[RMDB]
RNA sequence: GGGAACGACUCGAGUAGAGUCGAAAAAUGAGUAUUCCAAAGAGAUGCAGAAUGCUAUGGUUUGUUAAUCCGUAGAAUAUUCUUGUGUUUCUGUGUAUCAGUUUGGAAGUGCAUCUGCUUCUGAGAUAGAAGCUUUUCUAUUCGUAGAAAAGCUUCUAAAAGAAACAACAACAACAAC
Reactivity to DMS in 0.01 (KOAc 150mM, MgCl2 10mM, bicine 150mM(pH8.5), 24C), signal-to-noise 3, nucleotides 027 to 126: a070u010g000a100g020u010a070u000u000c010c020a080a090a020g020a030g000a000u000g000c010a010g010a020a020u010g000c000u000a000u000g010g010u000u000u010g000u020u070a070a070u020c000c000g010u000a000g000a080a060u010a020u010u000c000u010u040g050u010g020u000u010u010c000u000g000u010g010u010a060u020c050a080g020u020u010u010g010g000a020a040g010u000g020c140a100u000c090u010g010c010u000u000c010u000g000a070g000a120u030
Reactivity to 2A3 in 0.01 (KOAc 150mM, MgCl2 10mM, bicine 150mM(pH8.5), 24C), signal-to-noise 3, nucleotides 027 to 126: a010u210g010a040g070u080a080u040u080c030c040a110a070a010g040a000g000a000u010g010c000a000g030a020a000u010g030c000u010a020u030g000g070u030u100u140g150u100u190a080a080u020c000c000g010u020a000g080a100a040u110a030u120u030c070u080u100g000u000g040u050u010u000c030u010g040u020g020u050a120u140c140a130g130u090u070u090g060g010a050a050g030u000g070c040a200u040c040u120g010c030u030u000c010u000g110a120g020a050u030
An RNA of 177 nucleotides, treated with DMS and 2A3 and read out base by base. It was measured as part of the RMDB libraries RFM100 and RFMREP.